[RMDB]
RNA sequence: GGGAACGACUCGAGUAGAGUCGAAAACCACCCCUUCGGGGGUGGAAAUCCUAAGUCAACGAGAGGCUAAUGACAUGAUAGAUUUCGGAAACGAAAUGUAUCAACAGCAUUAGCUCCCCACCUCGUUGAUAUGGAAAAAGGGCUUCUUCGGAAGCCCCAAUUGGAUCGGGUUCGCCCGAUCCAAUUGAAAAGAAACAACAACAACAAC
Reactivity to 2A3 in 0.01 (KOAc 150mM, MgCl2 10mM, bicine 150mM(pH8.5), 24C), signal-to-noise 2, nucleotides 027 to 156: c000c000a000c000c000c000c010u040u070c300g090g000g000g030g000u010g000g000a060a050a010u020c000c000u070a270a050g010u000c010a000a000c000g000a000g000a010g010g010c000u010a010a010u010g050a090c030a100u030g010a000u000a000g120a030u000u000u000c000g010g030a030a050a040c000g010a000a010a000u110g040u050a000u010c010a020a060c070a070g040c000a010u000u000a000g010c010u020c000c000c000c000a060c010c000u000c000g000u000u000g000a000u000a040u050g040g030a030a100a120a080a100g070g000g000c000u030u030c050u080u100c250g100g000a000a000g000c000c010c000
Reactivity to DMS in 0.01 (KOAc 150mM, MgCl2 10mM, bicine 150mM(pH8.5), 24C), signal-to-noise 1, nucleotides 027 to 156: c000c000a070c010c000c000c020u010u000c300g010g090g000g000g160u000g000g010a020a040a010u000c010c010u000a120a270g050u000c020a010a000c000g000a010g000a300g000g010c010u000a000a000u000g000a080c000a300u000g000a000u000a000g010a060u010u000u000c000g010g010a110a110a300c020g000a000a020a020u000g000u000a000u000c000a020a100c040a150g000c000a010u000u000a000g000c040u000c300c060c020c060a300c240c020u000c000g040u020u040g000a020u000a140u000g020g000a060a060a060a060a060g020g070g030c040u010u010c020u000u000c210g020g000a030a020g020c000c000c000